[RMDB]
Chemical mapping of a 307-nucleotide RNA with DMS and 2A3.
RNA sequence: GGGAACGACUCGAGUAGAGUCGAAAAACGGCGUUACGACGCCGAAACGACCUUACUUGAACAGGAUCUGUUCUAUAGGCUCGUACCUCUGUUUCCUUGAUUUCUCAAGAGACAGGCCCUUAACCCUGGUUGAUGAACCAUGACCGUGCGGCUAGAGCGUGAUUGACGGCUACGAUCGUCCUCGGACGCAUCCAGUGCUGUAGAGGAUCGUUACUCGGCUCGGUUUCUACCUUGCCGGGGUGGUCGCACGGCGGUCUGACAGGUCAAGCCCCACUUUCGAGUGGGGCAAAAGAAACAACAACAACAAC
Reactivity to DMS in 0.01 (KOAc 150mM, MgCl2 10mM, bicine 150mM(pH8.5), 24C), signal-to-noise 5, nucleotides 027 to 266: a180c010g010g010c010g000u000u010a090c160g020a030c010g000c000c000g010a010a070a300c020g000a030c020c010u000u000a040c070u020u010g000a020a020c040a020g000g010a130u030c020u000g010u000u000c000u010a090u010a040g010g000c300u000c000g000u000a120c050c020u010c020u000g000u000u000u000c150c030u000u000g010a050u010u020u020c180u000c010a020a020g010a060g010a010c010a010g010g010c040c030c040u000u000a110a150c200c010c030u000g000g000u010u000g010a140u010g010a120a050c020c020a100u010g020a150c020c000g020u000g020c020g010g000c000u000a100g020a120g000c010g000u010g000a300u020u020g000a040c040g010g010c010u010a140c300g000a020u000c000g010u000c010c020u020c300g010g010a030c030g020c160a020u000c040c120a150g010u010g010c000u000g000u000a120g010a060g000g000a090u000c010g010u000u000a110c010u000c000g010g000c000u000c120g000g000u000u020u020c260u020a040c000c010u000u000g010c000c000g000g000g010g010u000g010g020u000c010g000c000a010c010g010g010c050g000g010u000c020u000g000a070c020a030g010g010u000c150a110a170
Reactivity to 2A3 in 0.01 (KOAc 150mM, MgCl2 10mM, bicine 150mM(pH8.5), 24C), signal-to-noise 4, nucleotides 027 to 266: a000c010g000g020c010g010u050u080a120c300g030a010c010g070c010c000g010a020a010a000c000g000a000c000c010u070u080a060c080u090u150g010a030a000c020a030g170g110a260u210c080u080g000u020u060c060u040a100u040a090g040g000c120u010c040g020u040a080c000c020u060c000u010g000u010u020u020c050c030u020u010g070a100u120u300u090c110u050c030a010a010g010a000g000a020c010a020g030g020c000c020c000u090u150a070a060c030c000c010u050g100g090u130u060g120a120u060g040a050a050c020c010a110u130g120a160c020c020g000u010g010c000g000g000c010u040a060g020a010g210c010g040u030g030a150u050u060g040a010c030g050g000c020u070a010c010g010a010u020c010g040u020c020c000u050c110g100g090a010c010g010c040a010u040c060c100a100g080u040g110c030u090g030u050a060g040a030g220g020a020u020c000g010u010u040a090c000u000c010g010g010c010u010c030g020g000u050u180u040c020u050a020c000c000u000u020g000c000c000g000g010g000g010u020g000g000u020c000g000c000a000c010g000g010c010g000g000u000c020u000g020a020c010a020g050g060u090c030a040a010

The data come from the RNA Mapping Database (RMDB), library POS240. DMS (dimethyl sulfate) methylates the pairing face of unpaired adenines and cytosines. For DMS, 19,499 sequencing reads were counted.